[RMDB]
The record gives the reactivity of an RNA of 177 nucleotides to 2A3 and DMS.
Reactivities are rounded to 0.1 and cut off at 0 and 3.
For 2A3 the reverse transcriptase was SuperScript II with manganese.
Source: RMDB library OK1LIB, as collected in RNAgym.
Conditions: 150 mM KOAc, 10 mM MgCl2 and 150 mM bicine (pH 8.5), 24 C.
RNA sequence: GGGAACGACUCGAGUAGAGUCGAAAAAUAUAUUGUCUAAGUUGAACGUUUAUUCUGAACGUUUAUUUCUCUCAUUGAUCCAUGGAGAAAUAUUUGGAAUAAAGAAGGGAAUUUUCUGGAUGCAAUAGCCAUUUACUAAUUUCGAUUAGUAAAUGGCAAAAGAAACAACAACAACAAC
Reactivity to 2A3 in 0.01 (KOAc 150mM, MgCl2 10mM, bicine 150mM(pH8.5), 24C), signal-to-noise 2, nucleotides 027 to 126: a000u300a010u040a060u020u120g080u050c040u130a130a110g050u180u110g030a170a060c070g000u000u000u000a020u110u140c000u000g020a030a000c000g040u000u150u020a080u020u090u000c000u000c020u020c000a030u000u080g100a090u030c070c070a000u030g020g030a020g020a050a050a000u060a050u000u000u080g160g020a060a010u030a090a040a010g130a120a080g120g000g070a000a090u030u020u060u000c050u160g060g030a050u060g050c000a050a000u000a040
Reactivity to DMS in 0.01 (KOAc 150mM, MgCl2 10mM, bicine 150mM(pH8.5), 24C), signal-to-noise 3, nucleotides 027 to 126: a050u010a090u020a060u000u000g000u010c030u050a100a170g020u020u000g020a040a060c030g020u000u000u000a030u030u000c100u020g010a030a040c290g010u000u010u000a020u010u000u010c020u000c000u060c060a030u000u010g000a080u030c130c110a170u000g010g010a010g000a020a010a000u010a060u000u000u000g000g000a010a040u010a070a030a030g000a070a090g000g000g030a070a080u010u010u010u010c030u000g000g010a280u030g000c120a040a070u010a120